[RMDB]
RNA sequence: GGGAACGACUCGAGUAGAGUCGAAAAUAACUGGAGAUUAGCACCGACGAGAAGGAGGAGAUCAGCGUGGACAUCCUGAUGCGACCGGAGGGCUCCGUGGGUCCCACGCGUCGCCAGAUCAAGAAGCCGGUAGCGUCCAGUUCGCUGGACGCUACCGAAAAGAAACAACAACAACAAC
Reactivity to 2A3 in 0.01 (KOAc 150mM, MgCl2 10mM, bicine 150mM(pH8.5), 24C), signal-to-noise 1, nucleotides 027 to 126: u190a030a020c050u120g030g000a140g040a110u050u100a000g000c080a030c020c040g020a000c050g080a010g000a210a060g070g000a000g020g000a000g000a060u160c070a000g010c000g030u000g000g090a020c000a060u020c000c000u000g000a030u130g000c000g050a050c000c000g000g090a060g090g130g000c000u020c050c020g190u300g000g020g000u010c000c030c000a000c010g000c030g010u080c000g000c020c050a000g000a070u080c000a020a020g000a020a000g120c050

Conditions: 150 mM KOAc, 10 mM MgCl2 and 150 mM bicine (pH 8.5), 24 C. Structure probing data (2A3) for a 177-nucleotide construct. It was measured as part of the RMDB library OK1LIB. Values cover nucleotides 27 to 126. For 2A3 the reverse transcriptase was SuperScript II with manganese.